[RMDB]
RNA sequence: GGGAACGACUCGAGUAGAGUCGAAAAGCCACCUCCGGGUGGUGGAGUUCCUGGUGAAGCACACGGCCAGCAAUGUGGGGCAUCGGAACCAUAAGGGGGACACCGCCUGUGAUUUGGCCAGGCUCUAUCCGCUAUGAUUAUUCGUAAUCAUAGCGGAAAAAGAAACAACAACAACAAC
Reactivity to DMS in 0.01 (KOAc 150mM, MgCl2 10mM, bicine 150mM(pH8.5), 24C), signal-to-noise 3, nucleotides 027 to 126: g020c010c020a020c010c010u000c210c160g000g030g020u000g000g040u000g010g020a130g010u000u000c000c000u000g010g010u000g010a080a050g020c030a050c030a030c190g000g010c010c090a050g010c110a100a110u010g020u000g010g000g000g000c050a130u000c140g010g000a110a070c020c020a070u020a100a100g020g010g010g020g010a190c100a050c100c100g010c020c020u000g010u010g000a110u000u000u000g010g010c050c010a080g010g020c030u000c060u000a150
Reactivity to 2A3 in 0.01 (KOAc 150mM, MgCl2 10mM, bicine 150mM(pH8.5), 24C), signal-to-noise 2, nucleotides 027 to 126: g020c000c000a020c020c010u040c130c170g210g010g010u010g000g000u060g020g000a050g010u110u170c030c000u020g040g050u070g040a060a000g030c000a010c010a020c120g020g040c000c030a020g010c050a130a130u150g040u100g040g070g000g000c020a070u130c110g060g050a060a030c000c000a040u080a230a140g070g010g010g000g000a000c020a010c050c020g010c000c020u020g040u050g070a140u120u030u070g010g000c000c020a000g000g020c000u010c000u080a110
The record gives the reactivity of an RNA of 177 nucleotides to DMS and 2A3. It was measured as part of the RMDB library OK2TRN. The DMS profile rests on 3,016 reads. Conditions: 150 mM KOAc, 10 mM MgCl2 and 150 mM bicine (pH 8.5), 24 C. For 2A3 the reverse transcriptase was SuperScript II with manganese.